Notes
Source: RMDB library TTRDEL, as collected in RNAgym. Chemical mapping of a 177-nucleotide RNA with DMS. The reactions ran in a buffer of 150 mM KOAc, 10 mM MgCl2 and 150 mM bicine (pH 8.5), at 24 C.
RNA sequence: GGGAACGACUCGAGUAGAGUCGAAAAGAUAUGGAAAUACAUAUUGACAUGGUCGGUCGGAAACGACCGCCAACAGCAAUGUAUUUCCUAAGUCAAAGUGUAGCCCCGGUUCGCCGGGGCUACACAAGAAUGAAAAGUAGUUCGCUACUUUUCAUUCAAAAGAAACAACAACAACAAC
Reactivity to DMS in 0.01 (KOAc 150mM, MgCl2 10mM, bicine 150mM(pH8.5), 24C), signal-to-noise 1, nucleotides 027 to 126: g000a010u000a080u000g000g010a010a000a010u000a010c000a020u000a130u020u010g000a220c030a160u000g000g010u010c040g020g010u000c000g010g000a020a010a060c010g000a000c000c010g000c020c000a010a030c290a110g000c040a090a020u000g000u000a010u000u000u000c000c000u000a010a070g000u000c000a090a090a090g000u000g010u000a010g000c000c050c000c000g030g000u000u000c200g000c030c010g020g000g010g000c000u010a000c010a000c000a020a050